RNA sequence: GGGAACGACUCGAGUAGAGUCGAAAAGAAAAACACAGCGGCACUUCUCGCGGAGAUUGAGAAGCAAAUUGGACUUCCUGUAACGCGUGCAGUCUCCACGCACUUUCAUGACGACCGCGUCGGCGGCCGACCCAUUACACUUCGGUGUAAUGGGUCGAAAAGAAACAACAACAACAAC
Reactivity to DMS in 0.01 (KOAc 150mM, MgCl2 10mM, bicine 150mM(pH8.5), 24C), signal-to-noise 1, nucleotides 027 to 126: g000a040a100a050a020a020c080a070c050a060g000c080g000g050c090a090c030u000u000c020u000c020g000c050g000g010a070g000a160u000u000g010a070g000a050a050g030c070a040a080a070u010u000g010g020a130c040u000u000c030c020u000g010u000a160a090c070g000c070g010u000g000c110a050g010u000c000u000c070c010a080c010g010c040a100c140u000u000u000c070a050u000g000a120c120g000a160c030c010g000c020g000u040c150g010g010c020g010g000c100
Reactivity to 2A3 in 0.01 (KOAc 150mM, MgCl2 10mM, bicine 150mM(pH8.5), 24C), signal-to-noise 2, nucleotides 027 to 126: g020a010a010a010a030a000c050a000c020a080g030c040g090g040c020a020c050u060u000c000u010c030g000c030g080g020a090g040a120u080u200g060a080g000a100a020g050c080a020a070a190u160u100g040g040a080c000u040u040c030c030u040g090u120a070a030c050g010c000g070u060g040c030a000g050u050c030u020c050c010a040c000g010c010a030c010u060u070u050c110a070u140g070a060c110g060a040c020c020g020c020g100u110c100g130g000c020g010g010c020
Chemical mapping of a 177-nucleotide RNA with DMS and 2A3.
Values cover nucleotides 27 to 126.
The 2A3 profile rests on 1,049 reads.
The reactions ran in a buffer of 150 mM KOAc, 10 mM MgCl2 and 150 mM bicine (pH 8.5), at 24 C.
The DMS profile rests on 855 reads.